RNA sequence: GGGAACGACUCGAGUAGAGUCGAAAAGUUUCGCUAUUACUUGAUGUAGUUCUACCUUUUGUUGUAACAAUGACACCAGAAUCAAUAAAAUAAUCACUAACAGCAAUAGCUUGAUCAAGUAUACCACGUACCACCACACGUUCGCGUGUGGUGGUACAAAAGAAACAACAACAACAAC
Reactivity to 2A3 in 0.01 (KOAc 150mM, MgCl2 10mM, bicine 150mM(pH8.5), 24C), signal-to-noise 2, nucleotides 027 to 126: g030u050u070u000c040g000c030u060a020u160u010a060c000u000u000g000a010u050g020u020a010g000u000u060c040u090a240c050c050u030u100u080u000g060u010u000g020u030a080a050c080a080a060u140g000a000c030a020c110c070a070g040a010a100u100c040a000a120u100a120a090a000a040u230a050a040u030c050a000c130u140a260a010c040a000g010c000a000a050u040a090g070c010u000u140g020a000u010c000a030a020g000u000a030u010a030c010c070a170c080
About this RNA: Conditions: 150 mM KOAc, 10 mM MgCl2 and 150 mM bicine (pH 8.5), 24 C. Structure probing data (2A3) for a 177-nucleotide construct. For 2A3 the reverse transcriptase was SuperScript II with manganese.